[RMDB]
RNA sequence: GGGAACGACUCGAGUAGAGUCGAAAAGUUGCAAUAAACGUGCUAUAGAUUUACCUUCUAUUAUUCCUCAAAGAAAUAGCAGAGGUGAGCCUUGCAAUACAGUUCAGAAAUACUAUCAGUCAGACUUCCGUGAAGUCAAUGGAAUGUACUGACGUGAAUUUAUAGGACUGUUCGCAGUCCUAUAAAUAAAAGAAACAACAACAACAAC
Reactivity to 2A3 in 0.01 (KOAc 150mM, MgCl2 10mM, bicine 150mM(pH8.5), 24C), signal-to-noise 5, nucleotides 027 to 156: g040u030u040g010c020a030a040u090a210a130a060c120g040u070g020c010u080a050u070a130g040a080u060u090u150a080c020c000u010u030c020u020a040u120u010a120u090u080c030c020u090c040a100a130a000g050a040a110a040u080a050g080c100a030g010a010g040g020u010g020a010g000c010c010u020u020g010c010a020a020u040a140c040a050g060u040u110c030a030g080a030a090a030u120a050c040u050a060u150c020a020g000u000c000a000g010a010c000u000u000c000c010g020u040g130a200a030g170u160c030a080a030u050g010g030a020a010u110g000u060a190c000u010g000a000c010g000u000g010a000
Reactivity to DMS in 0.01 (KOAc 150mM, MgCl2 10mM, bicine 150mM(pH8.5), 24C), signal-to-noise 3, nucleotides 027 to 156: g010u000u000g010c010a100a100u000a030a110a050c080g010u000g030c030u000a160u000a060g010a100u000u000u000a040c030c000u000u000c000u010a040u000u000a060u010u010c020c000u000c140a100a090a200g010a040a040a030u000a020g010c020a060g030a080g010g020u010g020a030g010c020c020u000u000g030c050a080a150u000a100c040a070g000u000u000c050a070g010a140a060a150u010a100c130u000a080u000c050a120g010u000c000a020g010a090c000u000u000c000c020g050u000g020a100a160g020u000c160a090a040u000g010g010a020a030u010g020u010a060c010u000g010a010c010g030u020g020a040
The data come from the RNA Mapping Database (RMDB), library OK3TST. This 207-nucleotide RNA was probed chemically with 2A3 and DMS. Values cover nucleotides 27 to 156. DMS adducts were read by reverse transcription with MarathonRT. Conditions: 150 mM KOAc, 10 mM MgCl2 and 150 mM bicine (pH 8.5), 24 C.